[RMDB]
This 207-nucleotide RNA was probed chemically with DMS and 2A3. 2A3 adducts were read by reverse transcription with SuperScript II with manganese. DMS adducts were read by reverse transcription with MarathonRT. Values cover nucleotides 27 to 156. For 2A3, 2,289 sequencing reads were counted.
RNA sequence: GGGAACGACUCGAGUAGAGUCGAAAACGGGGUUGGCUAUAGUUGAUUUCGAACCGUAUGCUUAUGUAUAUGGAAUGAUUUGUACGCUUUACGCAUGUGUACACUCACUCUCAGUUCACUCUUGUGAGAGAAGGGAGAGAGAGAUAUUUUGCGAUUAGGAUUCGUUGAUCUUCGGAUUGGUGAAUUCAAAAGAAACAACAACAACAAC
Reactivity to DMS in 0.01 (KOAc 150mM, MgCl2 10mM, bicine 150mM(pH8.5), 24C), signal-to-noise 3, nucleotides 027 to 156: c040g020g010g050g040u000u000g020g060c030u000a120u000a100g030u000u000g000a120u000u000u000c040g010a100a270c020c020g000u000a020u000g020c020u000u010a100u000g030u000a040u000a020u000g000g010a100a140u010g010a080u000u010u010g020u010a050c070g000c040u000u000u000a150c110g010c070a050u000g030u010g030u000a030c020a130c070u000c000a170c000u000c010u000c020a070g010u000u000c020a110c020u000c030u000u010g020u020g010a060g000a080g000a070a100g020g010g000a060g000a060g010a070g000a040g020a090u000a020u000u010u000u000g010c000g010a160u010u000a160
Reactivity to 2A3 in 0.01 (KOAc 150mM, MgCl2 10mM, bicine 150mM(pH8.5), 24C), signal-to-noise 3, nucleotides 027 to 156: c020g000g000g000g000u010u020g010g000c010u020a020u060a090g000u010u030g030a150u020u070u060c020g050a070a030c010c010g000u000a010u010g000c010u180u120a080u220g010u010a020u000a010u020g000g030a040a040u040g030a050u010u000u080g000u000a000c000g020c020u030u100u050a000c010g000c010a010u030g000u000g010u000a000c000a020c000u010c000a040c000u010c000u000c010a060g030u020u010c010a010c000u030c000u070u120g030u140g060a020g000a000g000a010a010g040g030g000a000g000a000g010a000g000a010g000a000u010a080u080u100u060u040g010c010g020a030u020u060a030